[RMDB]
RNA sequence: GGGAACGACUCGAGUAGAGUCGAAAAUGUUUGCAAUUCGUUGCAAACAAACUACCGAGAACGUUGCUCGGUAUAAACAGCGAACCGUUGGAAACAAGGGAACUAUGGAACGCUUCGGCGUUCCAAACGUACAAUUAUAUUUCGAUAUAAUUGUACGAAAAGAAACAACAACAACAAC
Reactivity to 2A3 in 0.01 (KOAc 150mM, MgCl2 10mM, bicine 150mM(pH8.5), 24C), signal-to-noise 3, nucleotides 027 to 126: u040g010u010u000u020g010c000a010a010u040u030c160g050u070u010g000c010a020a010a000c000a020a040a000c030u010a010c020c020g000a010g010a080a080c100g100u090u170g040c000u000c000g000g040u020a000u020a010a020a010c030a020g080c040g070a070a040c010c030g150u030u050g040g040a060a050a030c020a040a020g030g030g000a040a020c030u040a140u130g010g000a000a010c000g000c000u010u030c180g070g000c000g000u000u000c000c000a000a000a000
Reactivity to DMS in 0.01 (KOAc 150mM, MgCl2 10mM, bicine 150mM(pH8.5), 24C), signal-to-noise 7, nucleotides 027 to 126: u000g010u010u000u000g000c000a010a020u000u010c210g020u000u000g000c000a010a010a000c010a030a100a100c170u000a090c000c000g010a010g010a110a170c200g020u010u000g020c000u000c000g010g000u000a020u000a030a080a110c130a050g000c060g000a090a110c040c040g010u000u010g000g010a140a090a110c040a050a050g000g000g000a070a090c130u010a140u000g010g010a000a010c000g020c000u000u010c160g040g010c000g010u000u000c000c010a000a020a070